[RMDB]
RNA sequence: GGGAACGACUCGAGUAGAGUCGAAAAGAAAAUACAAGGCUGACAAAACCCUGUCCCAACCUCCACGUGGUGUCGGCUGGAUAAUGCUGCAUUAUGUUGCAUUUUUCAACUGGGAAGGGCAAAAAAACAACUUUACACACUUCGGUGUGUAAAGUUGAAAAGAAACAACAACAACAAC
Reactivity to 2A3 in 0.01 (KOAc 150mM, MgCl2 10mM, bicine 150mM(pH8.5), 24C), signal-to-noise 1, nucleotides 027 to 126: g000a010a010a000a000u210a050c050a090a000g000g070c000u000g020a020c070a010a080a060a130c020c020c000u010g190u100c030c000c000a010a010c030c000u060c050c020a110c140g180u200g000g000u010g000u000c000g000g020c020u010g000g000a020u010a020a040u010g010c000u060g020c020a030u190u130a110u300g010u000u020g000c000a000u040u020u010u040u000c040a030a000c060u000g020g000g000a030a020g030g020g020c080a060a100a000a000a000a000a000
The record gives the reactivity of an RNA of 177 nucleotides to 2A3. The reactions ran in a buffer of 150 mM KOAc, 10 mM MgCl2 and 150 mM bicine (pH 8.5), at 24 C. For 2A3, 801 sequencing reads were counted. For 2A3 the reverse transcriptase was SuperScript II with manganese.